[RMDB]
RNA sequence: GGGAACGACUCGAGUAGAGUCGAAAACUCCAAGAUGGUAACCACUCAUAACAUGUGGCUUUUUAAAUUCAAAUGAACUAAAGUUGACUAAAAUUAAAAAUUCAGUUCCUCAGUCACACCAGACACAUUUCAAGUCCUCAAUAGCCUCACAAGGCGAUAGGAAACUUUAUUUCGAUAAAGUUUCCUAAAAAGAAACAACAACAACAAC
Reactivity to 2A3 in 0.01 (KOAc 150mM, MgCl2 10mM, bicine 150mM(pH8.5), 24C), signal-to-noise 2, nucleotides 027 to 156: c050u080c010c000a030a050g090a110u090g000g090u090a060a040c000c000a020c020u080c060a180u130a210a090c040a100u180g010u060g040g000c060u200u070u020u040u150a060a240a070u090u050c020a020a040a160u140g050a000a000c000u050a080a090a030g090u120u060g030a040c010u090a050a000a130a210u230u240a190a090a010a090a080u070u070c010a010g010u010u010c000c010u010c010a010g020u040c000a030c020a020c030c020a010g030a020c010a000c010a110u020u140u130c050a070a010g020u070c000c020u040c020a020a060u230a120g000c040c000u050c010a040c000a080a110g050g000c010g020a020
Reactivity to DMS in 0.01 (KOAc 150mM, MgCl2 10mM, bicine 150mM(pH8.5), 24C), signal-to-noise 1, nucleotides 027 to 156: c070u000c010c050a110a250g000a060u000g030g000u020a060a020c020c000a010c010u000c060a300u000a080a130c100a120u020g020u000g030g000c010u000u010u000u000u000a000a030a090u000u000c080a040a160a070u000g000a050a120c020u000a090a060a140g020u000u030g000a110c060u000a030a020a000a060u000u000a070a070a060a100a100u000u000c020a060g000u010u000c010c070u000c100a090g010u000c000a020c070a090c040c040a100g020a160c000a030c060a060u000u000u000c090a090a080g000u000c010c010u010c070a040a110u000a200g010c020c000u000c080a090c100a080a020g030g030c030g010a180

Chemical mapping of a 207-nucleotide RNA with 2A3 and DMS. The DMS profile rests on 1,327 reads. The RNA was probed in 150 mM KOAc, 10 mM MgCl2 and 150 mM bicine (pH 8.5) at 24 C. Values cover nucleotides 27 to 156. Source: RMDB library OK3TST, as collected in RNAgym.